Chemical mapping of a 177-nucleotide RNA with 2A3 and DMS. For 2A3 the reverse transcriptase was SuperScript II with manganese.
RNA sequence: GGGAACGACUCGAGUAGAGUCGAAAAGCACGCCAGGGCAUUAUUACGAAGGAAAUGGAGUUUGUGGCGCUGCGCGAGCACAUGGACCCAGAGUUUGUACGCAGCGAGAUCGCCCGUGGCCGUGCGACAGGCACCUAGGAUUCGUCCUAGGUGCCUGAAAAGAAACAACAACAACAAC
Reactivity to 2A3 in 0.01 (KOAc 150mM, MgCl2 10mM, bicine 150mM(pH8.5), 24C), signal-to-noise 2, nucleotides 027 to 126: g010c000a030c000g030c010c010a020g030g000g010c040a000u000u080a070u140u090a290c150g060a070a060g090g130a090a050a120u220g040g000a170g130u000u050u050g070u090g050g010c020g000c020u020g010c000g000c010g010a020g000c020a000c010a100u040g050g060a080c000c000c060a000g000a020g090u060u090u040g040u030a010c010g000c010a030g000c030g020a020g020a030u140c120g010c010c010c010g020u030g000g000c130c060g000u000g000c020g000a000
Reactivity to DMS in 0.01 (KOAc 150mM, MgCl2 10mM, bicine 150mM(pH8.5), 24C), signal-to-noise 3, nucleotides 027 to 126: g040c010a000c000g020c020c010a300g010g030g000c000a090u000u000a090u000u000a050c080g000a130a150g030g000a090a110a140u000g010g010a200g010u000u000u000g030u000g010g020c070g040c010u000g030c050g020c080g000a050g010c070a030c040a090u000g010g000a090c030c020c040a140g010a120g000u000u000u010g000u000a150c080g000c030a070g000c010g010a150g000a070u000c190g010c000c010c040g000u010g020g000c080c060g000u000g000c020g000a060
DMS adducts were read by reverse transcription with MarathonRT. Values cover nucleotides 27 to 126. For 2A3, 1,510 sequencing reads were counted. Conditions: 150 mM KOAc, 10 mM MgCl2 and 150 mM bicine (pH 8.5), 24 C.